Structure probing data (DMS) for a 177-nucleotide construct. Reactivities are rounded to 0.1 and cut off at 0 and 3. The data come from the RNA Mapping Database (RMDB), library TTRINS. DMS adducts were read by reverse transcription with MarathonRT. The reactions ran in a buffer of 150 mM KOAc, 10 mM MgCl2 and 150 mM bicine (pH 8.5), at 24 C.

RNA sequence: GGGAACGACUCGAGUAGAGUCGAAAAGAUAUGGAAGCGAGGGUUGAUCUUCAUCAUGGAGAAGAAGAUGUCGGAAACGACAUCCCUUCGAUGAAGUGAUGAGAGAUCAACCCUCGCUUCCUAAGUCCUUUAGAGAAUUGUUCGCAAUUCUCUAAAGAAAAGAAACAACAACAACAAC
Reactivity to DMS in 0.01 (KOAc 150mM, MgCl2 10mM, bicine 150mM(pH8.5), 24C), signal-to-noise 3, nucleotides 027 to 126: g000a120u000a300u000g000g010a010a000g030c000g000a020g020g000g030u000u000g000a010u010c000u000u010c000a010u010c000a010u010g000g000a050g010a010a010g010a090a300g010a010u000g020u010c010g000g000a110a110a240c020g010a020c000a000u000c000c090c010u000u010c000g000a120u020g000a180a190g000u000g000a000u000g000a070g010a020g010a000u000c000a000a000c000c000c000u000c000g000c000u000u000c010c000u000a010a090g000u010c050